Source information: The record gives the reactivity of an RNA of 177 nucleotides to DMS. DMS adducts were read by reverse transcription with MarathonRT. Reactivities are given for positions 27 through 126. The reactions ran in a buffer of 150 mM KOAc, 10 mM MgCl2 and 150 mM bicine (pH 8.5), at 24 C.
[RMDB]
RNA sequence: GGGAACGACUCGAGUAGAGUCGAAAAGAAAACAUGGAAACAUGCAGGUGGCCAGCCGCCCGGGCCACCGUUACUCCACUCCACUCCUUCGGGACUGGUUUGGAGGAACAUAACAGGGCAAAAAAAACAAUCUACCUGUGUUCGCACAGGUAGAUUGAAAAGAAACAACAACAACAAC
Reactivity to DMS in 0.01 (KOAc 150mM, MgCl2 10mM, bicine 150mM(pH8.5), 24C), signal-to-noise 1, nucleotides 027 to 126: g000a110a130a120a160c010a000u010g010g000a260a190a190c020a000u000g010c130a150g020g000u000g010g020c000c010a050g000c280c190g010c050c000c000g040g000g000c000c010a000c000c010g020u000u000a040c000u000c020c020a000c000u010c000c000a010c220u010c000c030u000u040c130g040g000g000a000c100u010g000g000u000u010u000g010g020a010g010g000a010a020c040a090u010a110a060c180a040g030g030g010c000a010a000a020a010a080a040a060a120